[RMDB]
RNA sequence: GGGAACGACUCGAGUAGAGUCGAAAAUAAGUCAUACCGCAACUCGACUAUGACGAAAUGGGAAACGGGUUAAUAUUCCCGUGCCACGGGGUCGAUCACGCUGGGCAUCGCCCAGUCGAACCGUCCAACUCCGUGGAAGCCGUAAUGGCAGGAAGCGCGUAUAAAGUGUGUUCGCACACUUUAUACGAAAAGAAACAACAACAACAAC
Reactivity to 2A3 in 0.01 (KOAc 150mM, MgCl2 10mM, bicine 150mM(pH8.5), 24C), signal-to-noise 6, nucleotides 027 to 156: u110a030a020g000u010c010a000u010a050c040c030g040c120a060a080c060u040c050g030a020c020u020a020u020g010a010c030g030a050a050a080u150g030g020g050a070a100a010c020g000g010g010u060u100a120a040u050a110u140u060c010c000c000g000u010g000c000c000a000c000g000g000g000g010u030c030g000a030u080c050a010c060g000c000u010g010g000g000c040a230u190c160g000c010c000c000a000g020u040c030g010a040a040c040c040g020u040c020c010a040a020c010u000c010c000g000u000g000g020a010a010g000c000c000g070u140a100a100u180g020g000c020a010g040g020a050a030g050c060g000
Reactivity to DMS in 0.01 (KOAc 150mM, MgCl2 10mM, bicine 150mM(pH8.5), 24C), signal-to-noise 6, nucleotides 027 to 156: u010a080a170g020u000c010a040u000a030c050c030g010c080a130a130c150u000c050g010a140c040u000a050u000g010a040c020g000a040a090a100u000g020g010g010a060a100a050c010g010g010g030u010u000a070a140u000a270u010u000c000c000c000g010u000g010c020c000a010c010g010g000g010g010u000c020g000a090u010c070a180c120g020c000u000g010g010g010c010a220u000c220g000c030c010c000a020g020u010c040g020a060a090c050c040g010u000c080c050a030a030c000u000c000c000g040u010g010g000a030a070g000c000c000g010u000a060a110u010g010g020c030a100g010g000a090a100g000c070g010